RNA sequence: GGGAACGACUCGAGUAGAGUCGAAAAAAUCGUCGACGCAGCGACGACGGUCCUGCCAUGAGACCGUAACGAGGACAUGUCGCCUCGAAUGGCGUCGGGGAGCCGGCAGCUUACCCCAAGGAUGAGCAAAAGAAUGAAACGUUCGCGUUUCAUUCAACAUACCACCUAACUUCGGUUAGGUGGUAUGAAAAGAAACAACAACAACAAC
Reactivity to DMS in 0.01 (KOAc 150mM, MgCl2 10mM, bicine 150mM(pH8.5), 24C), signal-to-noise 2, nucleotides 027 to 156: a100a050u000c020g020u000c010g010a110c070g050c090a110g000c030g000a050c020g040a070c010g040g010u000c000c000u010g030c070c200a220u000g010a090g000a060c020c030g040u000a030a100c060g000a100g020g000a100c050a140u020g010u010c070g040c010c010u030c020g010a110a080u010g010g010c000g020u000c020g000g010g010g010a060g010c010c010g020g000c070a170g000c020u000u010a090c030c020c020c040a100a160g030g000a100u010g020a050g030c020a090a080a060a100g000a010a000u000g000a010a040a010c010g010u000u010c300g070c070g040u000u000u000c000a000u010u000c010a050a110
Reactivity to 2A3 in 0.01 (KOAc 150mM, MgCl2 10mM, bicine 150mM(pH8.5), 24C), signal-to-noise 4, nucleotides 027 to 156: a010a010u030c020g010u000c010g030a100c060g010c190a080g050c030g010a000c000g000a010c000g000g010u000c010c010u030g000c020c000a080u070g030a050g000a040c010c000g010u020a020a000c000g000a010g000g030a030c060a150u230g050u160c130g010c010c000u000c010g010a010a020u020g000g010c000g000u040c050g000g000g000g020a030g150c030c030g080g030c030a030g000c020u040u090a170c000c000c010c010a020a040g070g010a110u150g030a030g050c080a050a070a070a070g010a000a000u010g000a010a000a010c000g030u080u100c290g000c010g080u000u030u000c000a000u010u010c000a000a010
Chemical mapping of a 207-nucleotide RNA with DMS and 2A3.
It was measured as part of the RMDB library M2RFPK.
In probing experiments dimethyl sulfate is read out at A N1 and C N3, which are open when not base-paired.
For 2A3 the reverse transcriptase was SuperScript II with manganese.